[RMDB]
RNA sequence: GGGAACGACUCGAGUAGAGUCGAAAAGUGUGGAGUUGAUCGAUUAUUGUUCAAGAUACAAGUGUCAGUUGAGUGUGAUAUGGCUUCCAUCAUCCAGUGUGUAGAGAAGCAUUAUAUAAGAUGGGAAAGACAAAUAGCAGUUCGCUGCUAUUUGUCUAAAAGAAACAACAACAACAAC
Reactivity to 2A3 in 0.01 (KOAc 150mM, MgCl2 10mM, bicine 150mM(pH8.5), 24C), signal-to-noise 1, nucleotides 027 to 126: g120u080g020u050g030g060a070g060u070u120g070a090u060c020g050a060u020u120a090u090u300g020u040u080c020a050a050g020a050u100a100c020a120a060g010u010g120u110c030a080g000u050u070g170a100g020u090g000u020g060a010u040a000u180g030g000c090u050u000c000c020a000u000c000a020u050c050c030a070g000u040g040u000g020u160a080g020a030g010a200a000g050c010a010u120u060a080u010a010u000a040a090g030a020u080g010g040g030a130a140
Reactivity to DMS in 0.01 (KOAc 150mM, MgCl2 10mM, bicine 150mM(pH8.5), 24C), signal-to-noise 4, nucleotides 027 to 126: g010u000g030u010g010g000a080g020u010u010g010a080u000c040g010a100u010u010a120u010u010g010u000u010c080a070a100g000a110u010a050c120a040a070g010u000g000u000c050a070g010u000u000g000a110g000u000g030u010g010a070u000a060u010g000g000c050u000u010c010c030a090u000c040a070u010c070c130a110g010u010g010u010g020u020a090g020a110g010a080a080g010c030a040u000u000a050u010a080u010a050a100g010a070u010g000g000g000a090a070